Structure probing data (DMS and 2A3) for a 177-nucleotide construct. It was measured as part of the RMDB library OK2TST. DMS adducts were read by reverse transcription with MarathonRT. 2A3 adducts were read by reverse transcription with SuperScript II with manganese. For 2A3, 819 sequencing reads were counted.
RNA sequence: GGGAACGACUCGAGUAGAGUCGAAAAUACUCCGGUCGAUGAUGAUUACGGAGAACCAAUCAUUAUAACAUCGUAUCUUCAAAAAGGUCAUAACAAGUUUCCUGUAAAUUUUCUAUACAUAGAUGUAACUUACGUACAGCUUCGGCUGUACGUAAGUAAAAGAAACAACAACAACAAC
Reactivity to DMS in 0.01 (KOAc 150mM, MgCl2 10mM, bicine 150mM(pH8.5), 24C), signal-to-noise 1, nucleotides 027 to 126: u010a140c000u000c010c020g010g020u000c020g000a100u000g010a170u020g010a050u000u000a210c080g020g000a020g010a010a220c100c050a050a060u000c050a020u010u030a070u020a090a090c010a020u010c060g020u020a060u000c010u000u010c090a050a070a030a170a050g010g000u000c120a110u000a040a070c120a030a100g020u000u000u000c000c000u000g000u000a000a150a160u000u010u000u000c050u000a080u000a020c010a080u000a110g000a040u000g000u000a020
Reactivity to 2A3 in 0.01 (KOAc 150mM, MgCl2 10mM, bicine 150mM(pH8.5), 24C), signal-to-noise 2, nucleotides 027 to 126: u040a000c000u010c010c010g000g000u000c040g120a260u250g020a040u030g010a000u190u130a070c010g000g010a040g020a030a000c030c000a080a000u110c060a040u050u300a040u100a170a080c020a060u030c010g040u120a070u010c040u030u070c070a050a070a030a000a030g000g030u050c030a120u060a280a050c030a020a130g090u000u040u080c010c010u040g040u130a090a120a150u080u100u020u000c050u040a150u060a100c020a070u140a100g040a040u010g020u100a030